About this RNA: Source: RMDB library TTRDEL, as collected in RNAgym. Chemical mapping of a 177-nucleotide RNA with DMS and 2A3. For 2A3 the reverse transcriptase was SuperScript II with manganese. The DMS profile rests on 4,548 reads. Values cover nucleotides 27 to 126. For DMS the reverse transcriptase was MarathonRT. For 2A3, 12,931 sequencing reads were counted. Conditions: 150 mM KOAc, 10 mM MgCl2 and 150 mM bicine (pH 8.5), 24 C.

RNA sequence: GGGAACGACUCGAGUAGAGUCGAAAAGAUAUGGACCAAUAGAUCUUUUGACGCUGGUCGGAAACGACUCAGCGAUAAGAUCAUUGGUCCUAAGUCAAAGUAGUUCUUAGUUCGCUAAGAACUACAACCACUUAGUCUUGUUCGCAAGACUAAGUGGAAAAGAAACAACAACAACAAC
Reactivity to DMS in 0.01 (KOAc 150mM, MgCl2 10mM, bicine 150mM(pH8.5), 24C), signal-to-noise 3, nucleotides 027 to 126: g010a010u010a260u000g000g010a020c000c000a010a000u000a130g010a010u000c000u020u010u010u000g020a240c020g010c000u000g000g000u000c000g020g000a090a060a110c000g010a020c000u010c000a020g020c000g030a070u000a010a030g010a010u010c000a030u000u000g000g010u000c000c000u000a010a050g010u000c020a110a120a100g020u000a010g000u020u000c000u000u000a010g000u000u000c230g020c000u010a000a010g000a010a010c000u000a000c010a070a140
Reactivity to 2A3 in 0.01 (KOAc 150mM, MgCl2 10mM, bicine 150mM(pH8.5), 24C), signal-to-noise 4, nucleotides 027 to 126: g010a010u050a020u110g000g000a000c010c020a010a010u050a140g010a010u000c030u050u250u130u230g120a070c010g000c010u000g000g010u010c020g000g010a050a060a020c010g000a000c070u090c300a000g000c000g000a000u060a030a020g000a000u000c000a000u010u000g000g000u000c000c000u000a000a000g000u000c020a030a110a060g000u000a000g000u000u000c000u010u010a030g010u040u070c230g030c180u000a010a010g000a010a000c000u010a000c000a000a020